About this RNA:
Structure probing data (DMS) for a 177-nucleotide construct. The data come from the RNA Mapping Database (RMDB), library OK2TST.
RNA sequence: GGGAACGACUCGAGUAGAGUCGAAAACACGCCGCUGGCGAAGUAAUCGUUACCGCCGAGCACCCCCGGCGCGCGGCUGUGCGGCCCCGGCCUGAAGUGCUGGCGGUCGAGGUAGACGCGCUCCUGCACAAGCUGGUGAUUUCGAUCACCAGCUUGUAAAAGAAACAACAACAACAAC
Reactivity to DMS in 0.01 (KOAc 150mM, MgCl2 10mM, bicine 150mM(pH8.5), 24C), signal-to-noise 1, nucleotides 027 to 126: c060a140c140g040c100c030g000c080u000g000g010c000g040a080a140g020u020a070a110u020c050g000u010u000a040c090c010g010c040c010g010a060g010c070a260c030c010c000c030c090g010g000c050g040c040g060c230g000g000c010u000g020u010g000c050g040g000c050c000c000c060g020g000c010c000u010g020a120a100g030u000g020c000u000g010g000c150g000g000u000c020g000a030g000g010u020a070g000a020c060g010c000g030c020u000c000c000u000g000c100